An RNA of 207 nucleotides, treated with 2A3 and read out base by base.

[RMDB]
RNA sequence: GGGAACGACUCGAGUAGAGUCGAAAACUUUUAACUGCAAUGUUAAGAAACUCAUUAUUCAUUCAACACAAUAGUUCUUAACCCUGGCCACACCUUUAGAAAAAAAAUGAUAUUCAGGCUUCAUCUCAAGAGUUCAGUUCAGUGUGUUGGAAUGGAAGCACGUAUUAGCAUUCGUGCUAAUACGUGCAAAAGAAACAACAACAACAAC
Reactivity to 2A3 in 0.01 (KOAc 150mM, MgCl2 10mM, bicine 150mM(pH8.5), 24C), signal-to-noise 2, nucleotides 027 to 156: c010u100u050u050u050a110a000c010u060g020c110a020a080u110g000u030u130a050a030g090a090a140a060c040u070c050a080u080u150a080u150u070c010a020u020u010c010a020a000c000a030c000a000a130u110a190g030u000u050c000u030u000a000a010c000c000c000u000g010g070c040c000a040c000a090c090c030u150u130u200a110g300a050a060a010a000a010a030a060a040u160g010a020u020a120u180u060c020a000g000g060c000u120u030c100a090u070c080u010c060a020a090g020a000g070u020u020c010a020g010u030u020c000a030g060u000g020u020g020u070u000g040g110a010a010u050g010g010a080a050
About this RNA:
2A3 adducts were read by reverse transcription with SuperScript II with manganese. The RNA was probed in 150 mM KOAc, 10 mM MgCl2 and 150 mM bicine (pH 8.5) at 24 C. Values are in units of 0.01, from 0 to 300, in steps of 10. It was measured as part of the RMDB library OK3TST.